[RMDB]
RNA sequence: GGGAACGACUCGAGUAGAGUCGAAAACGCUGGGCUUAAACAAUCGAGUAGGGAGCUGAAGCGCGCACGGCGAAGAACUACUUCGAUUGCUUAAGCCUGUGCUGAAGCGCGCACGGCAACCGAAAGGUGCGAAAACGGCAGGGUUUCGACCCUGCCGCGGAUAAUAAUUCUUCGGAAUUAUUAUCCGAAAAGAAACAACAACAACAAC
Reactivity to DMS in 0.01 (KOAc 150mM, MgCl2 10mM, bicine 150mM(pH8.5), 24C), signal-to-noise 1, nucleotides 027 to 156: c060g040c070u000g020g020g030c000u000u000a010a050a040c010a040a040u000c020g040a040g030u000a000g040g010g000a140g000c000u010g020a100a110g020c040g010c020g050c000a300c040g000g000c010g020a110a260g040a140a300c020u000a030c000u000u000c010g020a050u000u010g020c000u000u010a060a060g010c030c010u010g000u010g020c080u020g020a110a020g000c000g000c030g020c030a190c060g020g050c040a060a270c060c020g000a110a120a160g000g000u000g040c010g000a130a020a080a120c100g010g010c020a040g010g010g000u000u010u000c250g010a090c000c000c000u000g000c020c010g000
Reactivity to 2A3 in 0.01 (KOAc 150mM, MgCl2 10mM, bicine 150mM(pH8.5), 24C), signal-to-noise 3, nucleotides 027 to 156: c020g000c050u110g010g000g010c010u010u000a020a000a010c010a020a000u000c000g000a000g000u000a000g010g000g020a010g010c000u030g030a210a040g050c030g000c010g030c020a020c030g030g010c000g110a220a010g010a020a010c000u010a000c000u190u220c050g010a000u000u010g000c000u000u000a010a020g000c010c010u000g000u030g010c020u090g030a120a040g030c010g000c020g000c020a010c010g050g000c020a050a060c020c010g050a100a030a010g050g000u020g010c010g020a070a070a010a020c000g000g000c010a000g020g020g010u050u170u200c170g060a070c000c000c000u000g000c000c000g000